RNA sequence: GGGAACGACUCGAGUAGAGUCGAAAAGACGAACGAAAACACAAAUGUUCCACGGAGCAGAAGGGUCCCUCACAUGAGGAUCACCCAUGUAACUCGGACAGGAUAUGCUUUUGGGAAAAAGAGAGAAUAAGACGUGUAAGUUCGCUUACACGUCUUAAAAAGAAACAACAACAACAAC
Reactivity to DMS in 0.01 (KOAc 150mM, MgCl2 10mM, bicine 150mM(pH8.5), 24C), signal-to-noise 3, nucleotides 027 to 126: g020a100c060g000a110a120c050g020a040a030a050a030c120a030c090a080a110a110u020g000u020u000c000c030a080c140g010g000a090g010c030a060g000a130a160g020g010g010u000c070c010c020u020c050a160c170a070u020g000a020g000g000a080u020c190a070c010c000c000a040u000g020u020a040a090c060u000c230g000g000a010c030a030g010g000a090u010a070u000g000c020u000u000u010u000g010g000g000a020a020a020a080a070g000a120g000a080g000a040a120
Reactivity to 2A3 in 0.01 (KOAc 150mM, MgCl2 10mM, bicine 150mM(pH8.5), 24C), signal-to-noise 2, nucleotides 027 to 126: g100a020c040g010a050a010c010g070a010a050a070a010c070a000c040a020a120a080u110g010u060u030c030c020a060c090g020g020a040g000c000a000g010a170a100g070g000g000u030c000c040c000u030c000a170c010a190u210g030a040g020g010a060u110c040a100c000c000c000a010u030g040u020a030a010c020u010c110g000g010a000c000a010g060g040a070u030a000u240g000c000u020u000u080u110g020g030g070a080a000a000a070a000g140a000g010a000g010a040a020
The record gives the reactivity of an RNA of 177 nucleotides to DMS and 2A3. The data come from the RNA Mapping Database (RMDB), library M2PK90. Values cover nucleotides 27 to 126.